[RMDB]
RNA sequence: GGGAACGACUCGAGUAGAGUCGAAAACAAUCCGCUCUAGCAGGGCCGAAUCCCUUCUCGAGGUUCGUUUACUUUAAGGCCUGCCUUAAGUAAGUGGUGUUGACGUUUGGGUCCUGCGCAAUGGGAAUUCAUGAACCAUGUCAGGUCCGGAAGGAAGCUCCAUAUAAUAGUUCGCUAUUAUAUGGAGAAAAGAAACAACAACAACAAC
Reactivity to 2A3 in 0.01 (KOAc 150mM, MgCl2 10mM, bicine 150mM(pH8.5), 24C), signal-to-noise 4, nucleotides 027 to 156: c050a020a100u030c020c040g040c040u030c010u030a040g030c040a020g000g020g000c040c060g100a050a090u110c010c000c000u040u030c030u010c030g060a070g020g060u110u080c010g010u040u030u040a090c040u090u080u110a030a020g020g010c070c120u120g070c060c000u090u000a020a010g020u010a040a030g010u040g080g020u050g040u050u060g050a060c080g000u020u040u110g070g000g000u040c000c000u030g000c030g000c020a010a160u020g000g000g030a050a090u150u180c050a060u180g110a070a060c010c000a010u020g020u020c010a010g000g000u010c020c000g010g070a020a030g050g010a060a020g020
Reactivity to DMS in 0.01 (KOAc 150mM, MgCl2 10mM, bicine 150mM(pH8.5), 24C), signal-to-noise 4, nucleotides 027 to 156: c070a110a130u000c010c030g030c030u000c020u000a110g020c040a090g040g030g050c040c010g000a110a080u010c010c010c000u010u010c060u010c030g010a050g010g000u000u010c020g010u000u010u000a050c060u010u010u000a090a100g020g010c050c060u000g020c000c010u010u000a020a040g010u010a030a050g010u000g030g010u000g010u000u000g010a120c100g020u000u000u000g020g010g000u010c010c000u000g000c100g040c070a090a060u000g010g010g000a110a160u010u010c120a150u000g020a200a250c010c010a070u000g000u000c040a060g010g000u000c010c010g020g010a080a100g010g010a130a210g000

Structure probing data (2A3 and DMS) for a 207-nucleotide construct. Conditions: 150 mM KOAc, 10 mM MgCl2 and 150 mM bicine (pH 8.5), 24 C. Source: RMDB library ARCHII, as collected in RNAgym. DMS adducts were read by reverse transcription with MarathonRT. Reactivities are given for positions 27 through 156. The DMS profile rests on 9,637 reads.